[RMDB]
RNA sequence: GGGAACGACUCGAGUAGAGUCGAAAAAAGGCGAGAUGCAAGUCCGACGCCGUUUGGUUCAGACAGGGGCAUAUAGUGUUUCGAAGCAAUCUGAGGGUGAUGAGCUUUCAAUUCUUCAUCCUCAAUUCAGGGUAUUGUAGUUCGCUACAAUACCCUGAAAAGAAACAACAACAACAAC
Reactivity to 2A3 in 0.01 (KOAc 150mM, MgCl2 10mM, bicine 150mM(pH8.5), 24C), signal-to-noise 2, nucleotides 027 to 126: a000a000g040g020c040g000a090g000a020u060g050c040a080a000g060u000c030c010g060a050c040g030c050c010g010u030u110u090g000g000u020u010c060a040g010a060c020a000g100g000g000g000c080a020u110a000u060a100g050u020g030u040u000u000c060g000a050a000g090c060a060a000u030c050u040g000a000g010g000g020u000g000a010u020g000a010g040c000u000u300u240c080a060a070u010u030c010u000u000c000a000u000c000c000u000c010a000a000u000u000
Reactivity to DMS in 0.01 (KOAc 150mM, MgCl2 10mM, bicine 150mM(pH8.5), 24C), signal-to-noise 2, nucleotides 027 to 126: a010a140g010g030c010g000a110g000a080u000g020c160a200a080g000u030c020c060g010a070c000g030c040c050g000u030u000u000g000g020u020u010c060a060g000a030c040a070g000g000g020g000c120a020u060a020u020a130g000u000g000u010u000u010c050g000a180a140g020c150a050a050u110c170u000g020a010g020g000g000u000g000a000u000g000a010g020c100u010u040u030c300a100a190u030u000c000u000u000c000a000u000c000c040u000c030a000a020u000u000